An RNA of 177 nucleotides, treated with 2A3 and DMS and read out base by base. The reactions ran in a buffer of 150 mM KOAc, 10 mM MgCl2 and 150 mM bicine (pH 8.5), at 24 C. 2A3 adducts were read by reverse transcription with SuperScript II with manganese.
RNA sequence: GGGAACGACUCGAGUAGAGUCGAAAAAAGAUAUGGAUUGGCGACAUGAUGACCCAAGCUCGAGUGCAGUUUCGGAAACGAAACUGCGCGAAGACAGGCUUGGCAAGUGUCGCAAUCCUAAGUCAAAUCUAUACUGUUACUUCGGUAACAGUAUAGAAAAAGAAACAACAACAACAAC
Reactivity to 2A3 in 0.01 (KOAc 150mM, MgCl2 10mM, bicine 150mM(pH8.5), 24C), signal-to-noise 3, nucleotides 027 to 126: a000a000g020a010u030a010u070g010g000a010u030u090g300g080c020g010a000c010a010u190g130a300u020g000a200c020c000c000a000a000g010c010u030c030g020a020g010u000g000c000a000g000u000u000u000c000g000g020a000a010a000c000g000a000a010a000c000u000g000c000g000c000g000a000a000g000a000c020a000g010g010c000u010u000g000g020c020a020a060g010u000g000u000c000g000c000a000a000u010c000c000u000a000a000g010u010c010a100a050a150
Reactivity to DMS in 0.01 (KOAc 150mM, MgCl2 10mM, bicine 150mM(pH8.5), 24C), signal-to-noise 8, nucleotides 027 to 126: a100a090g000a010u000a020u020g000g000a020u000u000g030g010c000g010a020c000a000u000g010a060u020g010a270c300c000c000a010a010g010c000u000c000g000a010g020u000g000c000a010g000u000u000u000c000g000g010a000a000a020c000g010a010a000a010c000u000g000c000g000c000g000a060a110g000a030c300a070g000g000c000u000u000g010g000c000a020a010g010u000g000u000c000g010c000a040a010u000c000c000u010a000a050g000u000c010a070a120a100